[RMDB]
RNA sequence: GGGAACGACUCGAGUAGAGUCGAAAAGUAGAGGAGGCUCACAACCUGGCACCGUCACGCGAGGACACCUUCUCCAAGAGGAUGUUGGUCAGGUACGCGAGGGAGGGGAGAAAGUGGGGACUAGGCCACGAAUUACGACUUUCGAGUCGUAAUUCGUAAAAGAAACAACAACAACAAC
Reactivity to DMS in 0.01 (KOAc 150mM, MgCl2 10mM, bicine 150mM(pH8.5), 24C), signal-to-noise 2, nucleotides 027 to 126: g010u020a110g000a170g000g000a110g010g000c020u020c030a090c130a060a070c030c010u000g000g000c150a130c130c060g000u000c070a070c140g050c070g010a230g050g010a030c120a130c160c090u010u000c010u000c070c070a070a220g040a120g040g020a040u000g000u010u000g030g040u000c020a010g000g050u030a020c230g030c050g000a110g000g030g000a120g000g010g020g000a120g020a040a040a090g030u010g020g040g010g020a050c060u000a070g000g000c140c020
Reactivity to 2A3 in 0.01 (KOAc 150mM, MgCl2 10mM, bicine 150mM(pH8.5), 24C), signal-to-noise 1, nucleotides 027 to 126: g050u070a040g050a090g060g050a070g030g000c000u000c010a120c000a020a040c020c000u030g000g050c000a020c030c050g120u110c000a030c110g150c070g030a070g030g010a010c040a050c130c040u070u040c000u060c020c020a090a030g040a060g160g030a050u070g010u190u100g110g020u090c050a010g070g010u030a040c070g000c060g050a040g000g040g020a180g020g000g000g000a050g120a110a100a030g070u070g000g010g000g000a040c060u050a080g000g110c020c000
This 177-nucleotide RNA was probed chemically with DMS and 2A3. The 2A3 profile rests on 1,238 reads. The reactions ran in a buffer of 150 mM KOAc, 10 mM MgCl2 and 150 mM bicine (pH 8.5), at 24 C. It was measured as part of the RMDB library OK2TRN.